[RMDB]
RNA sequence: GGGAACGACUCGAGUAGAGUCGAAAACGCUGGGUCGGUCGAGUGAAUAUGCGGAGCGAUAAGAAACUGAAGCGCGCACGGUUUCUUUUGACGCUCCGGCAUAUUCGCGAAGACAGCCGACCUGUGCUGAAGCGCGCACGGCAACCGAAAGGUGCGACACUAACGGAAUGUUCGCAUUCCGUUAGUGAAAAGAAACAACAACAACAAC
Reactivity to DMS in 0.01 (KOAc 150mM, MgCl2 10mM, bicine 150mM(pH8.5), 24C), signal-to-noise 1, nucleotides 027 to 156: c090g020c030u000g040g030g000u010c000g090g010u010c000g010a080g030u000g000a030a030u010a010u010g010c070g000g000a030g040c010g000a130u000a020a040g010a010a000a010c000u000g010a120a090g000c070g030c010g110c010a300c000g010g000u010u000u000c000u000u000u000u010g040a150c080g030c030u000c010c020g000g030c000a010u010a000u000u000c000g030c020g010a060a180g000a090c300a080g000c020c000g000a000c020c000u020g030u000g010c000u000g010a090a090g000c050g010c010g020c000a120c080g010g020c010a180a150c040c050g000a120a130a220g000g040u010g030c010g000a300
Reactivity to 2A3 in 0.01 (KOAc 150mM, MgCl2 10mM, bicine 150mM(pH8.5), 24C), signal-to-noise 2, nucleotides 027 to 156: c060g000c000u080g000g000g000u010c000g010g010u020c000g020a010g010u000g010a000a000u000a000u000g010c000g020g010a000g000c020g050a080u000a240a040g000a000a000a010c000u030g050a180a040g010c000g000c000g010c010a010c010g010g000u020u000u010c000u050u120u090u210g120a090c080g000c000u000c000c000g000g000c000a000u000a000u000u000c000g000c010g000a010a010g020a000c000a000g010c000c000g010a000c000c000u020g040u070g000c030u070g050a080a020g000c000g010c000g000c020a010c030g070g000c010a150a120c020c010g030a070a040a010g060g000u030g020c000g020a020
Structure probing data (DMS and 2A3) for a 207-nucleotide construct. For 2A3, 2,776 sequencing reads were counted. Source: RMDB library RNAMAK, as collected in RNAgym. The RNA was probed in 150 mM KOAc, 10 mM MgCl2 and 150 mM bicine (pH 8.5) at 24 C. 2A3 adducts were read by reverse transcription with SuperScript II with manganese.